This 177-nucleotide RNA was probed chemically with DMS and 2A3. DMS adducts were read by reverse transcription with MarathonRT. Reactivities are rounded to 0.1 and cut off at 0 and 3. It was measured as part of the RMDB library OK2TST.
RNA sequence: GGGAACGACUCGAGUAGAGUCGAAAACUUCUCAAGUUAAAGACAGUGCCUACGGAUCGGUCGAUGUCAGCGAGAUGGCGGUGGCGGCCAGCAGAAGUCCCUCGCUGAUGAAGGACACCGCCUACGACGUCCCUACCCUAUUCGUAGGGUAGGGACGAAAAGAAACAACAACAACAAC
Reactivity to DMS in 0.01 (KOAc 150mM, MgCl2 10mM, bicine 150mM(pH8.5), 24C), signal-to-noise 2, nucleotides 027 to 126: c300u020u000c010u010c020a140a090g010u010u030a050a100a110g000a070c090a050g000u010g000c010c010u000a140c110g010g030a050u000c140g000g000u000c060g010a110u020g020u010c000a040g010c000g040a070g000a130u000g010g010c010g000g000u000g010g010c060g000g020c040c060a060g000c080a090g000a100a080g000u000c000c130c000u000c030g000c010u010g000a030u010g010a080a140g000g010a120c090a060c030c040g010c000c010u010a050c160g020a150
Reactivity to 2A3 in 0.01 (KOAc 150mM, MgCl2 10mM, bicine 150mM(pH8.5), 24C), signal-to-noise 2, nucleotides 027 to 126: c010u100u000c020u000c080a050a080g100u090u180a210a100a010g060a040c070a020g040u050g110c000c000u030a070c040g030g050a070u160c050g000g000u040c040g080a030u130g020u040c020a020g000c070g030a050g020a070u060g060g000c020g000g090u050g040g020c000g000g030c070c030a000g040c050a020g010a130a010g030u000c020c000c020u020c000g000c030u060g000a050u070g030a020a020g090g010a000c010a000c030c020g000c000c020u060a050c010g150a020